[RMDB]
RNA sequence: GGGAACGACUCGAGUAGAGUCGAAAAUCAGGCGUUUCGACGCCUGAAAAAAAGAUAUGGACCUAACUGCUUUUGACGGUCUAUCCAUCGGAAACGAUGGUAAGGACCGAUAAGCAGCUAGGUCCUAAGUCAAAAAAGUAUCCCUUCGGGGAUACAACGUAUCCUCUAACUUCGGUUAGAGGAUACGAAAAGAAACAACAACAACAAC
Reactivity to 2A3 in 0.01 (KOAc 150mM, MgCl2 10mM, bicine 150mM(pH8.5), 24C), signal-to-noise 2, nucleotides 027 to 156: u010c000a000g000g000c010g050u090u110u160c220g060a050c020g020c000c010u000g000a000a000a000a000a000a000a000g000a010u000a010u060g000g000a000c010c000u000a000a020c000u000g020c010u060u100u140u270g130a110c150g000g010u000c010u000a040u000c000c000a010u000c000g000g000a040a020a010c020g000a000u010g020g000u010a050a070g080g000a000c000c010g060a070u080a050a000g000c020a000g000c000u000a000g020g000u000c000c000u010a000a000g000u010c010a000a000a000a000a000a150g020u020a010u030c040c000c000u010u030c220g050g000g000g000a000u000a000c010a010a000